[RMDB]
The record gives the reactivity of an RNA of 177 nucleotides to DMS and 2A3.
DMS adducts were read by reverse transcription with MarathonRT.
Source: RMDB library RFM100, as collected in RNAgym.
DMS (dimethyl sulfate) methylates the pairing face of unpaired adenines and cytosines.
For 2A3 the reverse transcriptase was SuperScript II with manganese.

RNA sequence: GGGAACGACUCGAGUAGAGUCGAAAAGAUGAGAAGGUUACAACGUUUUAUGGAACGUGCUGCGGACAAUGUCAGUGUCAUCUUGAAGAAGAAUAAUAAAAGCAUGCGGUGUAAAAGCCGCAUGCUUCUGCACUAACUCCUUCGGGAGUUAGUGCAGAAAAGAAACAACAACAACAAC
Reactivity to DMS in 0.01 (KOAc 150mM, MgCl2 10mM, bicine 150mM(pH8.5), 24C), signal-to-noise 1, nucleotides 027 to 126: g000a000u000g000a040g000a090a160g000g000u010u000a270c090a070a140c000g000u000u000u000u000a300u000g070g010a060a010c050g000u000g030c120u000g000c150g000g000a050c160a030a010u120g000u030c160a080g000u050g000u000c000a000u000c040u000u000g030a160a020g000a100a190g010a100a000u070a190a200u080a130a010a090a050g030c000a000u000g000c000g090g070u000g010u030a140a060a150a270g000c000c000g030c000a000u000g000c000u000u000
Reactivity to 2A3 in 0.01 (KOAc 150mM, MgCl2 10mM, bicine 150mM(pH8.5), 24C), signal-to-noise 1, nucleotides 027 to 126: g110a050u130g000a000g010a170a030g150g070u270u300a100c040a020a010c110g000u000u000u040u050a170u050g180g000a040a000c000g000u000g050c150u050g000c020g010g000a070c110a010a090u230g100u300c000a000g040u090g000u010c000a020u000c050u010u010g000a000a000g010a070a000g220a000a170u020a160a020u100a000a140a000a050g000c000a000u000g010c000g060g000u100g000u090a030a030a000a000g000c000c000g000c000a000u000g000c000u000u000